[RMDB]
RNA sequence: GGGAACGACUCGAGUAGAGUCGAAAAGCGCUCCAGAACGUGACUUCUGAAGACGGGCGCCGACAAGUUAGAUUGUCAAGGCGACAGUGUAGUGACACUGGGUAAUCUAACUUACCAAUCGCCGGCGCGUUGAGUCACGUCAACAACCGUCGAGCGAACGCUAGUAGGGUUUCGACCCUACUAGCGUAAAAGAAACAACAACAACAAC
Reactivity to 2A3 in 0.01 (KOAc 150mM, MgCl2 10mM, bicine 150mM(pH8.5), 24C), signal-to-noise 1, nucleotides 027 to 156: g090c050g000c000u020c040c030a010g050a100a000c010g030u010g010a000c000u240u110c100u180g170a120a000g060a060c030g060g000g070c000g000c000c000g010a010c040a040a000g000u020u030a000g050a060u040u000g010u010c010a030a040g190g070c000g050a040c010a030g040u080g010u060a300g080u280g130a040c010a010c020u000g000g100g000u140a000a000u000c000u030a000a020c000u000u030a050c000c060a040a100u200c120g000c000c000g000g000c010g010c000g000u010u080g000a000g000u010c010a000c010g010u010c040a030a070c020a010a040c050c000g020u030c030g040a010g010c010g020a000